This 177-nucleotide RNA was probed chemically with 2A3 and DMS. DMS adducts were read by reverse transcription with MarathonRT. It was measured as part of the RMDB library TTRDEL. Values cover nucleotides 27 to 126. The reactions ran in a buffer of 150 mM KOAc, 10 mM MgCl2 and 150 mM bicine (pH 8.5), at 24 C.
RNA sequence: GGGAACGACUCGAGUAGAGUCGAAAAGAUAUGGAUGUACAGGGAGCGUUUUCGGAAACGAAACGCGAGGAUCUGUGACAUCCUAAGUCAAAAGCGUGAUAAGAUGGUUCGCCAUCUUAUCACGCAACGGUUAGACUUAGUUCGCUAAGUCUAACCGAAAAGAAACAACAACAACAAC
Reactivity to 2A3 in 0.01 (KOAc 150mM, MgCl2 10mM, bicine 150mM(pH8.5), 24C), signal-to-noise 3, nucleotides 027 to 126: g040a010u090a030u180g000g000a000u000g000u010a010c000a010g000g000g040a010g000c010g020u020u050u210u170c020g040g030a080a060a040c030g000a000a010a010c000g000c000g030a060g010g010a010u010c000u030g030u080g110a000c000a010u000c000c000u000a080a000g090u040c020a030a030a110a080g000c000g000u000g000a000u000a000a000g000a000u000g030g060u080u250c300g030c060c010a000u000c000u000u000a000u000c000a000c000g000c000a010a000
Reactivity to DMS in 0.01 (KOAc 150mM, MgCl2 10mM, bicine 150mM(pH8.5), 24C), signal-to-noise 3, nucleotides 027 to 126: g000a030u010a300u010g000g020a010u000g010u000a020c000a010g000g010g000a010g030c000g010u010u000u000u010c000g010g000a110a070a250c030g000a010a020a000c000g030c010g000a050g010g010a030u010c010u000g000u000g010a020c000a000u000c000c000u000a020a080g030u000c040a070a100a080a130g000c010g020u000g010a010u000a000a000g010a020u000g000g010u000u020c290g000c010c010a010u010c000u000u000a000u000c000a000c000g010c000a010a020